[RMDB]
RNA sequence: GGGAACGACUCGAGUAGAGUCGAAAACAUCCAUGUUUACUACUACUUGAUCUCUGUUUUUGGAGUUUUUCGAGUAUUUUGCGAUGCAUGGGAGAGAAAAUUGUGACCAGGUUUCUUCAAAUUUCCCACAAGUUACAGCAUUCGUGCUGUAACUUGUAAAAGAAACAACAACAACAAC
Reactivity to DMS in 0.01 (KOAc 150mM, MgCl2 10mM, bicine 150mM(pH8.5), 24C), signal-to-noise 2, nucleotides 027 to 126: c140a110u050c000c010a020u010g000u000u020u000a050c020u000a040c200u010a000c000u010u000g010a040u030c000u000c000u000g010u000u040u060u050u040g000g000a030g000u070u020u000u000u000c000g000a000g000u000a020u010u020u040u030g000c130g040a000u000g010c020a000u000g010g000g010a080g020a050g000a080a040a040a060u000u010g050u030g010a100c170c120a170g010g010u020u000u000c000u010u010c140a020a030a070u050u000u000c000c000c000
Reactivity to 2A3 in 0.01 (KOAc 150mM, MgCl2 10mM, bicine 150mM(pH8.5), 24C), signal-to-noise 7, nucleotides 027 to 126: c040a040u050c000c000a010u000g010u030u080u040a070c020u010a020c010u000a010c000u000u010g020a020u010c010u000c000u020g260u230u120u100u180u300g050g000a030g060u160u080u020u040u070c000g010a000g000u000a040u030u170u110u050g070c120g040a020u040g000c000a020u010g000g060g000a030g010a010g030a020a100a060a050u130u090g030u040g050a050c030c020a050g050g070u000u020u000c010u020u010c020a070a040a180u040u060u000c000c000c000

Source: RMDB libraries RFM100 and RFMREP, as collected in RNAgym. Chemical mapping of a 177-nucleotide RNA with DMS and 2A3. The reactions ran in a buffer of 150 mM KOAc, 10 mM MgCl2 and 150 mM bicine (pH 8.5), at 24 C. DMS adducts were read by reverse transcription with MarathonRT.